Structure probing data (2A3) for a 177-nucleotide construct. For 2A3, 523 sequencing reads were counted. For 2A3 the reverse transcriptase was SuperScript II with manganese.

[RMDB]
RNA sequence: GGGAACGACUCGAGUAGAGUCGAAAAAUCCAGUCAGUGACUGCUCCAACGUCCCGAUUCCGAAAGGACAAAGGUGGUUCGACUCGUGAACGAAUGAAAAUGCAUUACUCUGAUGGCUUGCCAUAGCUCCCGUCCAGUUCUUCGGAACUGGACGGGAAAAAGAAACAACAACAACAAC
Reactivity to 2A3 in 0.01 (KOAc 150mM, MgCl2 10mM, bicine 150mM(pH8.5), 24C), signal-to-noise 1, nucleotides 027 to 126: a000u050c000c000a000g070u000c010a050g020u000g120a020c000u000g020c010u000c010c000a100a080c070g070u050c000c000c000g060a070u150u000c090c000g080a020a030a030g000g000a000c000a000a090a000g120g000u070g020g000u000u050c000g020a020c020u080c070g120u110g070a090a060c030g060a000a000u070g200a050a110a080a110u080g010c000a080u010u010a070c000u000c000u010g110a030u000g000g120c000u000u110g210c000c000a120u210a180g050c000